Chemical mapping of a 177-nucleotide RNA with DMS.
RNA sequence: GGGAACGACUCGAGUAGAGUCGAAAAGCCCGCCACAUUCAAGCUAAAGAGGCUGACUAUGUGCUGGCCCUCAAGGAGAAUCAUCCCACGCUGUUUGAGCAGGUUGAGCAAUGGUUUGAAACGGCUGCGCUUUUUACGGAUUCGUCCGUAAAAAGCGAAAAGAAACAACAACAACAAC
Reactivity to DMS in 0.01 (KOAc 150mM, MgCl2 10mM, bicine 150mM(pH8.5), 24C), signal-to-noise 1, nucleotides 027 to 126: g050c020c000c090g020c040c030a070c090a130u000u000c080a090a020g020c020u000a040a130a150g020a170g000g010c020u000g000a090c080u000a030u020g030u000g040c010u000g020g010c030c020c020u000c030a000a020g000g000a050g010a090a070u010c100a080u000c000c000c000a120c300g000c010u000g020u010u000u000g000a060g020c060a010g000g030u000u000g020a050g000c070a070a060u010g000g010u000u000u000g010a020a100a130c110g020g020c050u000g020